[RMDB]
RNA sequence: GGGAACGACUCGAGUAGAGUCGAAAACACCUAACGUUCGCGUUAGGUGAAAGAUGCAAGUAAACCAGGAUCGACGCAUCAUGAAGAACCAGGAGAAAUAAAAAACGACAGGGUUCGCCCUGUCGAAGUCAUUCUAACACUUCGGUGUUAGAAUGACAAAAGAAACAACAACAACAAC
Reactivity to DMS in 0.01 (KOAc 150mM, MgCl2 10mM, bicine 150mM(pH8.5), 24C), signal-to-noise 1, nucleotides 027 to 126: c030a000c010c000u010a000a020c000g010u000u010c280g040c010g020u010u000a020g030g030u000g000a040a120a110g000a070u000g010c060a070a120g000u020a010a080a120c090c040a090g040g020a120u010c080g040a100c140g000c080a000u000c000a110u010g010a020a150g020a120a130c040c050a030g000g000a120g020a080a010a060u000a020a050a080a030a020a130c010g010a030c000a000g000g010g050u000u020c190g000c000c000c010u000g010u000c000g000a010a030
Reactivity to 2A3 in 0.01 (KOAc 150mM, MgCl2 10mM, bicine 150mM(pH8.5), 24C), signal-to-noise 2, nucleotides 027 to 126: c030a000c000c000u000a020a000c000g010u030u050c300g000c020g090u000u000a010g000g000u000g020a000a000a000g010a000u010g000c060a000a120g040u180a100a050a110c040c040a050g020g110a100u050c080g050a030c110g000c000a010u010c000a000u120g040a040a080g040a030a040c030c030a040g090g100a110g170a040a130a000u210a050a210a030a030a010a040c020g010a000c000a000g000g000g090u030u070c190g080c000c030c000u000g010u000c010g000a000a000
The record gives the reactivity of an RNA of 177 nucleotides to DMS and 2A3. Conditions: 150 mM KOAc, 10 mM MgCl2 and 150 mM bicine (pH 8.5), 24 C. Reactivities are rounded to 0.1 and cut off at 0 and 3. The DMS profile rests on 680 reads. 2A3 adducts were read by reverse transcription with SuperScript II with manganese. Reactivities are given for positions 27 through 126. For DMS the reverse transcriptase was MarathonRT.